Overview
An RNA of 177 nucleotides, treated with 2A3 and read out base by base. 2A3 adducts were read by reverse transcription with SuperScript II with manganese. The RNA was probed in 150 mM KOAc, 10 mM MgCl2 and 150 mM bicine (pH 8.5) at 24 C.

[RMDB]
RNA sequence: GGGAACGACUCGAGUAGAGUCGAAAAAGUGAGGCAUAUCACGUGCGUAAUAAUACGAAUGGGAGCACAAUUGGACGCACAAAUGAACACACUACUGGGUGCACAAUUGGACGCGCAAAUGCACAACCGAGCCUGAGCGUUUCGACGCUCAGGCUCGAAAAGAAACAACAACAACAAC
Reactivity to 2A3 in 0.01 (KOAc 150mM, MgCl2 10mM, bicine 150mM(pH8.5), 24C), signal-to-noise 1, nucleotides 027 to 126: a000g040u000g000a000g010g000c040a010u250a090u200c170a070c070g000u000g020c000g010u070a060a000u050a030a140u040a160c150g040a040a150u300g040g050g050a080g000c030a020c010a020a020u040u070g070g000a000c050g000c000a010c000a000a080a210u020g080a140a100c080a000c000a120c000u270a140c050u140g010g000g000u020g040c000a000c000a030a000u070u050g000g010a040c000g000c000g000c000a000a000a100u150g030c070a000c000a090a010c050